An RNA of 177 nucleotides, treated with 2A3 and DMS and read out base by base. 2A3 adducts were read by reverse transcription with SuperScript II with manganese. Source: RMDB library TTRINS, as collected in RNAgym. Conditions: 150 mM KOAc, 10 mM MgCl2 and 150 mM bicine (pH 8.5), 24 C. The DMS profile rests on 1,969 reads.
RNA sequence: GGGAACGACUCGAGUAGAGUCGAAAAGAUAUGGAGACACCUACCCACCCUGAUUAUAUGGGUAUGAUGACCGAGCUCGGAAACGAGCUCGCAAGUACAGUAUAAUCAGGAGGGUGUCUCCUAAGUCCUCCUCCUAAUACUUCGGUAUUAGGAGGAGAAAAGAAACAACAACAACAAC
Reactivity to 2A3 in 0.01 (KOAc 150mM, MgCl2 10mM, bicine 150mM(pH8.5), 24C), signal-to-noise 3, nucleotides 027 to 126: g110a110u300a220u300g000g000a020g000a000c000a000c010c040u300a300c090c090c020a030c020c000c010u010g010a010u040u020a020u010a030u070g300g010g000u040a010u040g300a300u100g030a000c020c030g000a000g010c020u000c010g010g080a070a160a110c000g000a000g000c000u020c000g000c000a120a180g000u010a000c000a000g030u010a030u000a020a010u010c010a000g000g020a000g010g000g000u000g000u010c000u020c000c000u010a000a000g030u130c010
Reactivity to DMS in 0.01 (KOAc 150mM, MgCl2 10mM, bicine 150mM(pH8.5), 24C), signal-to-noise 3, nucleotides 027 to 126: g010a170u000a130u000g010g010a020g030a030c000a000c000c000u000a200c010c000c020a300c050c010c000u000g000a030u000u000a000u000a010u000g000g000g020u000a000u010g000a100u000g000a130c300c020g000a030g020c000u000c000g000g000a100a120a170c010g020a010g010c010u000c000g020c000a030a180g020u000a010c020a300g000u000a000u000a010a030u000c010a010g000g030a050g010g000g030u000g000u000c010u000c010c000u010a010a070g000u000c140